[RMDB]
RNA sequence: GGGAACGACUCGAGUAGAGUCGAAAAGGCACAUUCGACGACGGCCACGCCAUCGAGAACGCUGAGGAAGCCAAGGCUGAACUGCGCGAAAUGCUGGAGGACUUCUGUUCGAACACUGACCUCCUGCGCGUGGCUGAGCUGCUCACCUCUUGGCACCUGCUACACAAUGCUUCGGCAUUGUGUAGCAAAAAGAAACAACAACAACAAC
Reactivity to 2A3 in 0.01 (KOAc 150mM, MgCl2 10mM, bicine 150mM(pH8.5), 24C), signal-to-noise 1, nucleotides 027 to 156: g080g000c040a040c070a210u140u140c060g070a010c060g020a030c010g100g000c010c010a020c060g050c030c010a090u020c030g000a010g050a300a010c020g020c050u010g010a000g000g030a140a070g010c020c090a040a100g030g000c020u000g110a150a090c010u070g030c000g000c000g030a020a200a060u260g020c010u020g000g000a000g000g000a010c020u080u040c030u100g060u030u130c120g070a030a050c110a000c100u040g030a020c030c000u000c000c000u040g000c090g000c010g010u000g000g080c030u060g020a000g030c050u050g000c000u020c010a140c020c040u160c000u050u010g010g000c000a010c010c000